[RMDB]
RNA sequence: GGGAACGACUCGAGUAGAGUCGAAAAAGCAGUAGCAUACGUGCUACUGCACUCUUUCCAUAGGUGAUGAGUCACAGGGCUCAGGGAAUGUGUCUGCACCUGUGACUCAUCACCAGUGGAAAGCCAAUAGUGAUACAGCUUUCGAGCUGUAUCACUAAAAAGAAACAACAACAACAAC
Reactivity to DMS in 0.01 (KOAc 150mM, MgCl2 10mM, bicine 150mM(pH8.5), 24C), signal-to-noise 3, nucleotides 027 to 126: a040g000c010a000g030u000a000g010c000a040u000a110c280g020u000g000c000u000a010c020u000g000c000a010c060u020c010u000u000u000c000c000a010u000a120g010g030u010g000a000u000g000a020g000u010c000a010c020a000g000g000g000c200u000c040a030g010g020g020a180a090u060g000u010g020u000c010u020g000c300a110c000c000u000g010u000g010a000c000u000c000a000u000c000a010c000c000a050g030u010g000g010a010a010a000g010c100c040a090a150
Reactivity to 2A3 in 0.01 (KOAc 150mM, MgCl2 10mM, bicine 150mM(pH8.5), 24C), signal-to-noise 6, nucleotides 027 to 126: a010g000c000a000g000u010a000g010c020a010u020a070c240g110u030g000c000u000a000c000u000g020c010a010c000u060c000u000u000u000c000c000a010u030a090g000g000u000g000a010u000g000a000g010u000c000a000c000a000g000g040g000c060u030c100a040g070g050g110a220a300u300g100u090g110u150c060u060g010c080a130c080c000u000g000u000g000a000c000u010c000a000u000c000a010c010c000a000g000u000g000g000a000a000a000g010c000c000a100a070